[RMDB]
RNA sequence: GGGAACGACUCGAGUAGAGUCGAAAAGGUCAGGCCUGAUCGGAAACAGCAGCAGGUGAGUCCGCCUUAUGUGAAGGAUCGGCUGAAACACGAGGAAAUACUGACCCAACGCAAGACGGUAGCCGAAAAAAUCUAGUUCACUUCGGUGAACUAGAAACCUUAACCCAAUGUUCGCAUUGGGUUAAGGAAAAGAAACAACAACAACAAC
Reactivity to 2A3 in 0.01 (KOAc 150mM, MgCl2 10mM, bicine 150mM(pH8.5), 24C), signal-to-noise 4, nucleotides 027 to 156: g000g000u000c000a010g010g050c020c010u100g020a110u100c050g060g070a140a120a090c040a050g080c010a000g020c020a020g010g040u030g040a040g050u010c030c020g010c030c020u100u090a160u160g090u050g070a100a030g030g010a040u040c010g020g000c030u040g010a080a080a000c060a020c050g030a030g010g070a030a050a040u130a050c000u010g010a020c000c000c030a040a050c070g050c090a080a040g050a040c030g120g050u070a010g010c020c010g010a100a000a000a010a000a020u010c000u000a000g000u000u000c000a000c000u000u010c110g050g000u010g000a000a000c000u000a000g020a010a000a000
Reactivity to DMS in 0.01 (KOAc 150mM, MgCl2 10mM, bicine 150mM(pH8.5), 24C), signal-to-noise 2, nucleotides 027 to 156: g000g010u000c040a090g020g030c060c000u000g000a100u010c010g040g030a210a110a090c070a150g030c060a100g010c050a040g020g000u000g020a140g010u000c020c040g010c010c030u000u010a050u000g040u010g000a100a140g020g000a100u000c020g010g000c010u000g000a170a100a050c020a120c040g010a080g030g000a110a120a120u000a070c030u010g000a060c010c000c040a070a210c110g000c060a050a100g040a100c060g030g010u000a070g010c010c020g000a000a000a040a060a040a080u000c000u000a030g000u000u000c000a000c000u000u000c300g060g060u010g020a010a020c000u000a000g000a020a020a040
The record gives the reactivity of an RNA of 207 nucleotides to 2A3 and DMS. For 2A3 the reverse transcriptase was SuperScript II with manganese. Source: RMDB library M2RFPK, as collected in RNAgym. The RNA was probed in 150 mM KOAc, 10 mM MgCl2 and 150 mM bicine (pH 8.5) at 24 C.